Source information:
Chemical mapping of a 177-nucleotide RNA with DMS and 2A3. Values cover nucleotides 27 to 126. Conditions: 150 mM KOAc, 10 mM MgCl2 and 150 mM bicine (pH 8.5), 24 C.

RNA sequence: GGGAACGACUCGAGUAGAGUCGAAAACUGGGCCGACCAUGACGCUGACCUGGCCGGUGACGGCGGCCCUCGGCCCGGCCUUCAGUGUCAGCGCUGUGGCGGUGCGCGGGGGCCAGACGGCGCAGGCACAAGUCUCUUAGUUCGCUAAGAGACUUGUAAAAGAAACAACAACAACAAC
Reactivity to DMS in 0.01 (KOAc 150mM, MgCl2 10mM, bicine 150mM(pH8.5), 24C), signal-to-noise 5, nucleotides 027 to 126: c050u000g010g010g020c000c020g010a110c030c030a070u000g010a090c070g010c060u000g000a080c040c030u000g010g010c010c000g000g010u010g010a080c030g000g010c080g020g000c010c020c020u000c000g000g000c020c000c010g010g020c010c020u010u010c040a030g010u000g010u000c170a120g010c060g010c000u000g010u000g000g010c010g000g000u010g010c030g010c020g020g010g010g000g020c010c010a040g000a050c050g000g010c020g010c020a050g010g010c100
Reactivity to 2A3 in 0.01 (KOAc 150mM, MgCl2 10mM, bicine 150mM(pH8.5), 24C), signal-to-noise 2, nucleotides 027 to 126: c020u020g000g060g020c010c020g070a120c020c010a070u090g020a030c030g010c070u050g050a090c010c010u010g020g010c010c020g010g010u050g040a030c040g030g060c040g020g000c000c020c000u010c000g010g020c000c000c020g220g120c040c000u170u180c030a040g020u040g110u220c120a080g070c060g000c060u010g020u010g010g020c030g040g030u190g000c180g020c010g020g040g000g000g000c020c010a040g040a020c010g020g000c070g000c070a030g000g030c030
The 2A3 profile rests on 6,829 reads.
For DMS the reverse transcriptase was MarathonRT.